About this RNA:
An RNA of 177 nucleotides, treated with 2A3 and DMS and read out base by base.
RNA sequence: GGGAACGACUCGAGUAGAGUCGAAAAGGCCCGAGCCGAACGAGGCCUGGGCGAUCGCCCUACAGAGCUUCGACGAGGCUGAAACGGUGCUUAUGACGCCGGAAAUCCAGCAGGCGGCUGUGGUAGCGAAUGGAAAGCAGUUCGCUGCUUUCCAUUCAAAAGAAACAACAACAACAAC
Reactivity to 2A3 in 0.01 (KOAc 150mM, MgCl2 10mM, bicine 150mM(pH8.5), 24C), signal-to-noise 3, nucleotides 027 to 126: g110g040c000c000c010g010a010g010c000c020g050a080a050c010g000a020g010g000c000c030u030g000g010g000c100g010a140u210c180g010c000c000c000u030a060c070a060g070a040g030c000u040u020c000g300a300c040g050a140g070g000c000u000g000a040a000a000c010g000g000u000g030c000u250u090a170u300g080a080c020g000c010c000g000g030a080a170a010u080c080c010a000g000c010a030g200g000c050g020g000c040u050g020u100g100g060u020a020g100c030
Reactivity to DMS in 0.01 (KOAc 150mM, MgCl2 10mM, bicine 150mM(pH8.5), 24C), signal-to-noise 4, nucleotides 027 to 126: g000g010c000c000c020g010a070g030c000c010g010a200a100c070g010a040g010g010c000c010u000g010g030g010c010g010a080u010c180g010c010c010c020u000a190c200a090g010a160g010c010u010u000c000g010a260c090g000a290g010g020c020u010g000a060a090a150c030g000g010u010g010c030u010u020a090u010g010a180c010g000c000c010g000g000a050a090a120u000c060c020a050g020c050a100g000g010c080g020g000c010u010g000u010g020g010u000a060g020c180

The RNA was probed in 150 mM KOAc, 10 mM MgCl2 and 150 mM bicine (pH 8.5) at 24 C.